This 177-nucleotide RNA was probed chemically with 2A3 and DMS. For 2A3 the reverse transcriptase was SuperScript II with manganese. Source: RMDB library M2PK50, as collected in RNAgym.
RNA sequence: GGGAACGACUCGAGUAGAGUCGAAAAGCCUUACGAUUCGUCGUAAGGCAUACAAAGUUUUCGCACUAUGAGCCCGCAGCGUUGGUGCUCCCACGCGGUGCAAUACGACGGAUUUCGAUCCGUCGAACAAAAAGCAAGAAUUCGUUCUUGCUUUUUGAAAAGAAACAACAACAACAAC
Reactivity to 2A3 in 0.01 (KOAc 150mM, MgCl2 10mM, bicine 150mM(pH8.5), 24C), signal-to-noise 8, nucleotides 027 to 126: g000c000c000u000u000a000c000g010a010u020u080c200g050u000c000g000u120a000a000g000g000c000a000u040a010c030a000a110a030g020u020u030u050u240c060g010c000a010c020u060a070u230g050a020g050c000c010c020g010c050a060g020c030g100u140u130g040g020u160g040c050u120c010c000c000a050c030g020c040g020g020u050g020c000a030a070u150a120c020g000a000c000g000g010a010u050u060u110c150g050a020u000c000c000g000u000c000g000a020a000
Reactivity to DMS in 0.01 (KOAc 150mM, MgCl2 10mM, bicine 150mM(pH8.5), 24C), signal-to-noise 9, nucleotides 027 to 126: g020c000c000u000u000a000c000g010a020u000u010c190g030u000c000g010u000a010a010g010g010c010a010u010a030c150a080a100a110g000u000u000u010u010c100g010c040a060c050u000a100u000g000a110g010c010c010c020g010c100a140g010c080g010u000u000g010g010u010g010c150u000c050c040c030a070c090g010c040g010g010u000g010c040a110a080u010a140c010g010a010c000g010g000a020u000u000u010c150g010a020u000c000c000g000u000c000g010a040a120
Annotation:
The 2A3 profile rests on 23,704 reads.